[RMDB]
RNA sequence: GGGAACGACUCGAGUAGAGUCGAAAAGAUAUGGAACGAGUAACGCAUCGAUCCGUAACAUCGUUCGGAAACGAACGUGGGGGAGCGUUCUCGUUCCUAAGUCAAAAUCGUGGGUUCGCCCACGAAACGGGGCAAUAUAGUUCGCUAUAUUGCCCCGAAAAGAAACAACAACAACAAC
Reactivity to DMS in 0.01 (KOAc 150mM, MgCl2 10mM, bicine 150mM(pH8.5), 24C), signal-to-noise 2, nucleotides 027 to 126: g000a030u000a210u010g000g000a000a000c000g020a000g010u030a000a000c000g030c000a300u020c250g000a000u000c000c000g000u010a050a120c140a070u000c040g000u000u000c000g020g000a050a040a120c010g010a010a000c000g010u000g010g000g000g000g010a020g020c000g000u030u000c000u000c000g020u000u000c000c000u000a010a060g000u090c040a090a090a080a070u000c000g000u000g000g010g020u000u020c230g000c010c000c000a000c000g000a000a030a060
Reactivity to 2A3 in 0.01 (KOAc 150mM, MgCl2 10mM, bicine 150mM(pH8.5), 24C), signal-to-noise 2, nucleotides 027 to 126: g020a000u050a020u060g000g030a020a010c010g000a000g050u210a020a000c000g060c020a120u300c060g020a030u000c020c020g000u110a090a150c020a270u130c020g000u010u010c000g000g010a010a030a030c000g000a000a000c000g020u060g010g000g000g000g020a040g020c000g010u010u000c000u010c000g000u000u040c010c000u000a000a000g000u020c000a020a010a010a300u050c010g010u010g030g000g040u030u080c300g130c030c000c010a000c000g000a000a000a000